[RMDB]
RNA sequence: GGGAACGACUCGAGUAGAGUCGAAAACGUACUUCGGUACGGCUGGAGGGGUCUGCUUGAGCUGUCCCCUUUGAUCUAUACUGAAGCCUCCACGGUAUAGGGAGGCGGACAGCAAUGAUGGCAGACGGAGGCACCCGCAUACACAGUUCGCUGUGAACGGUAAACUGUAGUUCGCUACAGUUUACCGAAAAGAAACAACAACAACAAC
Reactivity to DMS in 0.01 (KOAc 150mM, MgCl2 10mM, bicine 150mM(pH8.5), 24C), signal-to-noise 2, nucleotides 027 to 156: c020g010u000a040c030u010u060c160g010g010u000a020c040g020g000c050u010g000g000a130g000g040g020g020u010c000u000g060c000u000u000g000a150g040c000u000g030u000c000c010c010c000u010u000u000g020a070u000c000u000a030u000a050c010u000g010a050a090g030c010c000u000c030c010a300c000g020g020u000a010u000a020g000g020g000a050g020g000c070g000g000a010c010a030g000c000a140a110u010g010a120u010g040g020c010a060g000a040c000g000g040a060g000g020c070a200c020c010c010g010c070a160u000a120c040a010c030a080g000u000u010c230g020c000u000g000u000g010a100a220
Reactivity to 2A3 in 0.01 (KOAc 150mM, MgCl2 10mM, bicine 150mM(pH8.5), 24C), signal-to-noise 6, nucleotides 027 to 156: c010g010u010a010c000u050u090c260g100g020u010a010c020g020g000c090u090g030g080a100g030g070g030g020u020c020u000g020c020u100u130g080a020g010c010u000g000u010c000c000c000c000u160u240u110g040a030u020c000u000a000u000a010c010u030g050a130a030g020c010c000u000c010c000a010c010g000g000u000a000u000a000g020g000g000a000g000g000c000g000g000a000c000a020g100c030a060a110u250g060a070u110g030g000c010a010g000a020c020g020g010a020g010g000c010a040c010c010c000g040c050a090u160a150c020a000c000a010g060u150u150c160g030c110u000g010u020g060a090a040
The data come from the RNA Mapping Database (RMDB), library RNAMAK.
This 207-nucleotide RNA was probed chemically with DMS and 2A3.
The 2A3 profile rests on 7,712 reads.
DMS adducts were read by reverse transcription with MarathonRT.
2A3 adducts were read by reverse transcription with SuperScript II with manganese.
Conditions: 150 mM KOAc, 10 mM MgCl2 and 150 mM bicine (pH 8.5), 24 C.